[RMDB]
RNA sequence: GGGAACGACUCGAGUAGAGUCGAAAAGCGUUCGGAUUGCGAGGGAUGAAGAGGUCACGGACGAACUGAAACGUGAAAGUUUGAAGCGUGAAGUUGACCGUGUAUUAGCUCAGAGCGGGCUUAUAAAGGGUUAAUCAAUCUUCGGAUUGAUUAACCCAAAAGAAACAACAACAACAAC
Reactivity to 2A3 in 0.01 (KOAc 150mM, MgCl2 10mM, bicine 150mM(pH8.5), 24C), signal-to-noise 2, nucleotides 027 to 126: g030c000g030u070u000c030g050g060a090u000u150g010c040g030a050g020g010g000a020u080g020a130a120g140a050g080g080u060c020a040c030g000g030a010c030g060a040a000c000u010g000a010a070a000c010g010u000g020a210a000a020g090u060u030u030g090a050a000g050c010g000u030g000a000a010g010u040u060g000a000c000c000g000u000g010u110a130u020u110a020g000c000u000c020a000g000a040g040c090g020g000g000c000u050u020a030u080a010a070a040
Reactivity to DMS in 0.01 (KOAc 150mM, MgCl2 10mM, bicine 150mM(pH8.5), 24C), signal-to-noise 3, nucleotides 027 to 126: g020c060g000u000u020c030g010g000a050u010u000g030c090g020a110g000g000g000a080u000g000a080a040g030a100g010g010u000c010a000c030g010g000a200c120g000a020a010c030u000g010a100a060a030c080g020u000g000a060a110a180g040u010u060u030g000a190a230g000c010g000u000g000a240a030g000u000u030g010a080c000c020g010u010g010u000a060u010u000a070g000c060u010c020a120g000a150g030c130g000g000g000c020u000u030a060u000a030a080a050
Conditions: 150 mM KOAc, 10 mM MgCl2 and 150 mM bicine (pH 8.5), 24 C. An RNA of 177 nucleotides, treated with 2A3 and DMS and read out base by base. It was measured as part of the RMDB library OK1LIB. The 2A3 profile rests on 1,195 reads.